[RMDB]
RNA sequence: GGGAACGACUCGAGUAGAGUCGAAAAGAUAUGGAUGUCUACCCACCAACUCUACGGUCAGAACUACGGUUCCCGUCUCGGAAACGAGACGCACCGCUGACCGUAGAGUUGAGGACAUCCUAAGUCACCAACAUUCAUUCUUCGGAAUGAAUGUUGGAAAAGAAACAACAACAACAAC
Reactivity to DMS in 0.01 (KOAc 150mM, MgCl2 10mM, bicine 150mM(pH8.5), 24C), signal-to-noise 2, nucleotides 027 to 126: g060a200u010a110u000g020g000a000u000g010u000c000u000a070c010c000c000a300c080c000a020a030c010u000c020u040a000c020g020g010u000c010a010g020a140a070c230u030a300c090g000g040u000u000c120c180c010g030u000c000u000c000g010g000a090a060a120c010g030a020g000a010c000g110c150a010c020c000g000c050u000g000a010c000c000g000u000a000g000a000g000u010u010g000a020g050g000a020c030a000u000c000c000u000a030a140g000u020c070a170
Reactivity to 2A3 in 0.01 (KOAc 150mM, MgCl2 10mM, bicine 150mM(pH8.5), 24C), signal-to-noise 1, nucleotides 027 to 126: g140a070u300a130u300g010g000a000u000g000u020c010u110a300c050c010c020a030c040c020a030a000c000u000c000u000a000c000g000g010u020c010a000g050a150a090c190u210a100c300g040g000u030u160c020c000c020g000u030c000u000c000g010g040a080a110a070c030g030a000g000a000c010g020c060a000c000c000g000c000u000g000a000c000c000g000u000a020g040a000g000u010u000g010a010g000g000a000c010a010u000c000c000u010a080a000g230u100c040a010